[RMDB]
RNA sequence: GGGAACGACUCGAGUAGAGUCGAAAAGUUGAAGGUUGGGUCUUGCGCAAUGGGAACCUGUGAACCAUGUCAGGUCCGGAAGGAAGCAGCAUUAAUCAGUGCUUCUCAUGUGCCGCGAGGUUGCCUGUACAUUAUUAUUAUUCGUAAUAAUAAUGUAAAAAGAAACAACAACAACAAC
Reactivity to DMS in 0.01 (KOAc 150mM, MgCl2 10mM, bicine 150mM(pH8.5), 24C), signal-to-noise 9, nucleotides 027 to 126: g010u010u000g010a090a050g010g010u000u010g010g010g010u010c000u000u000g010c020g010c010a080a020u000g000g010g010a020a020c010c000u000g010u000g000a140a150c300c270a020u000g000u000c010a300g000g000u000c010c010g000g070a130a110g010g010a020a010g000c010a220g000c010a010u000u000a120a110u010c030a010g010u010g010c180u000u000c000u000c010a010u000g000u010g020c100c060g030c010g010a010g000g000u000u010g010c020c010u000g000
Reactivity to 2A3 in 0.01 (KOAc 150mM, MgCl2 10mM, bicine 150mM(pH8.5), 24C), signal-to-noise 7, nucleotides 027 to 126: g050u060u060g050a110a040g140g010u070u050g060g000g020u090c000u000u010g000c010g000c000a000a020u000g000g010g020a000a020c000c000u010g010u010g010a060a080c120c050a030u010g060u080c010a000g020g020u000c010c000g040g070a100a050g010g010a000a010g000c000a000g010c000a020u000u060a050a060u050c020a010g020u010g090c170u020u000c000u010c000a020u090g140u090g220c170c040g000c020g010a000g020g020u120u140g030c000c010u010g010

Source: RMDB libraries RFM100 and RFMREP, as collected in RNAgym.
The record gives the reactivity of an RNA of 177 nucleotides to DMS and 2A3.